[RMDB]
RNA sequence: GGGAACGACUCGAGUAGAGUCGAAAAGAAACGCAAGGCCGCUGACCGACGGGAUAUUGUGGGGCUUACCACAGGGGACGCGGCGUUAUCACUUGCCUUUUAAGCCGACCGUCUGGGCUGCUUACAAACCACCCAACUAUCUUCGGAUAGUUGGGAACGUUAUUUCUGUGUUCGCACAGAAAUAACGAAAAGAAACAACAACAACAAC
Reactivity to 2A3 in 0.01 (KOAc 150mM, MgCl2 10mM, bicine 150mM(pH8.5), 24C), signal-to-noise 4, nucleotides 027 to 156: g020a010a060a000c070g000c010a000a010g110g010c000c000g000c030u050g090a040c020c000g020a040c060g120g040g050a140u140a120u250u080g000u010g010g000g060g090c120u080u130a090c000c000a010c020a040g000g010g000g030a000c010g000c010g000g010c000g010u050u040a030u030c010a030c120u010u040g000c000c030u000u100u010u080a030a010g010c020c020g100a160c010c000g050u150c090u110g020g030g030c000u010g000c020u040u040a050c060a040a080a000c020c010a040c010c000c000a000a000c000u000a000u000c000u020u020c070g090g000a000u000a000g000u000u000g000g000g000a010a000
Reactivity to DMS in 0.01 (KOAc 150mM, MgCl2 10mM, bicine 150mM(pH8.5), 24C), signal-to-noise 2, nucleotides 027 to 156: g020a070a060a050c070g010c010a070a070g000g060c000c000g000c030u010g010a300c020c000g020a150c040g020g020g020a160u000a120u000u000g020u010g000g010g000g020c140u010u010a090c000c050a060c050a040g010g010g000g040a270c100g030c020g000g000c020g040u000u010a040u020c120a190c050u000u000g010c000c040u000u000u000u000a040a070g000c000c020g040a160c040c030g000u000c050u010g010g020g060c020u000g010c020u010u000a110c050a070a090a160c000c060a100c010c000c000a010a000c000u000a010u010c000u000u000c280g040g020a000u000a000g010u000u000g010g000g000a000a010
This 207-nucleotide RNA was probed chemically with 2A3 and DMS. The DMS profile rests on 3,409 reads. Reactivities are given for positions 27 through 156. The reactions ran in a buffer of 150 mM KOAc, 10 mM MgCl2 and 150 mM bicine (pH 8.5), at 24 C. For DMS the reverse transcriptase was MarathonRT. Source: RMDB library M2RFPK, as collected in RNAgym.